This 177-nucleotide RNA was probed chemically with 2A3.

RNA sequence: GGGAACGACUCGAGUAGAGUCGAAAAAGCAUACGGACUAGUACGCUAGUCCGUAUGCAAAGAGAGCCGUCUAUUGACAGUUCGUCUCUGUUCAGUCAGGUACUGUCAUGGAGUCGCUCUCUUCAAAGAUGGUUCUUGCUUUCGAGCAAGAACCAUCAAAAGAAACAACAACAACAAC
Reactivity to 2A3 in 0.01 (KOAc 150mM, MgCl2 10mM, bicine 150mM(pH8.5), 24C), signal-to-noise 3, nucleotides 027 to 126: a000g010c010a000u000a000c000g000g000a010c010u000a000g020u030a030c280g020c100u000a000g000u000c000c000g010u000a000u000g000c000a000a000a000g000a000g000a000g030c080c160g090u040c020u070a140u120u110g000a000c000a000g000u050u130c110g150u110c150u000c000u110g110u120u300c100a280g210u080c010a000g050g000u030a000c000u000g000u010c000a000u000g030g030a050g030u060c020g000c000u000c000u000c000u020u060c020a000a010a010
Values are in units of 0.01, from 0 to 300, in steps of 10.
The reactions ran in a buffer of 150 mM KOAc, 10 mM MgCl2 and 150 mM bicine (pH 8.5), at 24 C.